[RMDB]
RNA sequence: GGGAACGACUCGAGUAGAGUCGAAAACUUUCCAAGAAUUCCUUUGAUGUUUCCCAGCCAGGGAUUGUCUUCCUCUAGUUUCUUGAUCUUCUUCUUGGCCUUCCGGAGAUCCUUCUCGAGAUCAUCCGUCCUUUAUCUAGUUCGCUAGAUAAAGGACAAAAGAAACAACAACAACAAC
Reactivity to 2A3 in 0.01 (KOAc 150mM, MgCl2 10mM, bicine 150mM(pH8.5), 24C), signal-to-noise 2, nucleotides 027 to 126: c000u050u070u020c010c020a010a010g040a060a100u060u080c010c010u090u060u080g050a050u080g060u020u030u000c000c010c010a000g030c030c020a030g060g010g000a050u040u090g030u000c000u060u030c000c000u020c030u010a090g060u060u080u000c030u010u090g090a110u030c010u050u000c010u040u000c000u050u000g020g020c010c000u040u050c010c020g020g000a050g010a020u040c030c020u040u060c010u010c020g120a110g010a180u030c000a030u020c030c000
Reactivity to DMS in 0.01 (KOAc 150mM, MgCl2 10mM, bicine 150mM(pH8.5), 24C), signal-to-noise 2, nucleotides 027 to 126: c170u000u000u000c030c020a100a070g000a150a140u000u000c010c010u000u000u010g000a080u000g020u000u000u000c010c010c030a150g010c050c080a050g020g000g000a030u000u000g000u010c040u000u000c030c020u010c080u000a100g000u000u000u000c020u000u000g000a120u000c030u010u000c040u000u000c040u000u000g020g010c060c010u000u000c050c050g040g000a150g000a050u000c020c030u000u000c010u000c030g010a080g010a160u000c040a090u010c060c060
This 177-nucleotide RNA was probed chemically with 2A3 and DMS.
Reactivities are given for positions 27 through 126.
The reactions ran in a buffer of 150 mM KOAc, 10 mM MgCl2 and 150 mM bicine (pH 8.5), at 24 C.
2A3 adducts were read by reverse transcription with SuperScript II with manganese.
For DMS the reverse transcriptase was MarathonRT.